The record gives the reactivity of an RNA of 207 nucleotides to 2A3. For 2A3 the reverse transcriptase was SuperScript II with manganese. Values are in units of 0.01, from 0 to 300, in steps of 10. The RNA was probed in 150 mM KOAc, 10 mM MgCl2 and 150 mM bicine (pH 8.5) at 24 C.

RNA sequence: GGGAACGACUCGAGUAGAGUCGAAAAUUUACUGAUUUUGUUUUCGCCGUGUAGCACCCGCAACGAUUUGAUUCGUGCAUUGUUCAAUUUUAUAGUCGUCGUACCGGCUUCGUUGACUUGAACCGAAUUGCUGCUAUCGGCGAGACUGGGCGACGACCAUGAUCUCCCGUUUCGACGGGAGAUCAUGAAAAGAAACAACAACAACAAC
Reactivity to 2A3 in 0.01 (KOAc 150mM, MgCl2 10mM, bicine 150mM(pH8.5), 24C), signal-to-noise 1, nucleotides 027 to 156: u120u050u100a080c050u070g090a150u110u020u040u190g000u010u030u140u010c030g000c000c000g130u060g030u130a020g010c060a150c020c140c160g020c060a170a140c020g000a010u000u030u200g100a180u030u220c060g010u010g020c000a050u060u100g010u040u050c000a110a080u000u000u170u170a210u140a180g020u000c000g000u030c000g000u040a300c060c010g000g000c000u080u030c070g010u020u070g070a110c110u030u050g020a060a050c040c050g000a180a060u190u090g070c060u040g000c000u000a020u050c030g020g000c000g000a000g000a000c000u000g000g000g020c030g010a000c000g000a000c000